The data come from the RNA Mapping Database (RMDB), library OK3TST. Chemical mapping of a 207-nucleotide RNA with DMS and 2A3. The DMS profile rests on 4,107 reads. Reactivities are given for positions 27 through 156. High DMS reactivity at an A or C suggests that its Watson-Crick edge is free. DMS adducts were read by reverse transcription with MarathonRT. The RNA was probed in 150 mM KOAc, 10 mM MgCl2 and 150 mM bicine (pH 8.5) at 24 C. Reactivities are rounded to 0.1 and cut off at 0 and 3.
[RMDB]
RNA sequence: GGGAACGACUCGAGUAGAGUCGAAAACAGGAUGCAACCGGAGCUGGUGAGAGGAACAGAGGUUAGUGAAGACGUGUGGCCACGAUACAGAUUAGAUGACCGCCCACUCGUGUGACCACAGAGUCACUUGCAUCUAUAGAGUUCCGAAGAGCUGAUGUGAAGGAACUGAUUUCGAUCAGUUCCUUCAAAAAGAAACAACAACAACAAC
Reactivity to DMS in 0.01 (KOAc 150mM, MgCl2 10mM, bicine 150mM(pH8.5), 24C), signal-to-noise 3, nucleotides 027 to 156: c050a130g030g000a100u010g040c010a080a120c040c030g050g010a160g010c030u000g040g020u000g010a120g020a130g030g010a050a100c020a080g010a060g030g060u000u000a090g030u000g010a080a060g000a080c040g010u020g010u000g010g010c000c020a020c030g010a210u000a250c090a070g020a160u010u000a170g000a140u000g000a090c080c030g010c060c050c030a090c100u010c110g000u020g000u010g010a050c010c020a040c060a110g020a160g050u000c010a060c030u000u000g030c030a050u000c010u000a080u000a150g010a100g020u000u000c020c010g010a110a090g010a140g030c060u000g000a100u030g010
Reactivity to 2A3 in 0.01 (KOAc 150mM, MgCl2 10mM, bicine 150mM(pH8.5), 24C), signal-to-noise 3, nucleotides 027 to 156: c020a020g050g030a050u110g030c030a000a080c020c040g060g000a010g020c040u040g020g040u090g020a110g020a050g050g010a000a020c040a040g030a040g040g000u030u080a020g010u020g080a070a030g130a060c100g100u030g000u020g020g000c000c010a010c020g010a000u070a150c100a070g070a120u090u200a000g060a130u130g080a060c010c060g010c040c000c000a030c000u000c030g060u060g070u140g060a170c000c000a030c010a070g030a040g020u000c000a000c020u000u040g000c000a000u000c040u000a040u030a110g100a020g020u000u000c040c020g020a070a030g010a040g040c050u030g000a070u050g100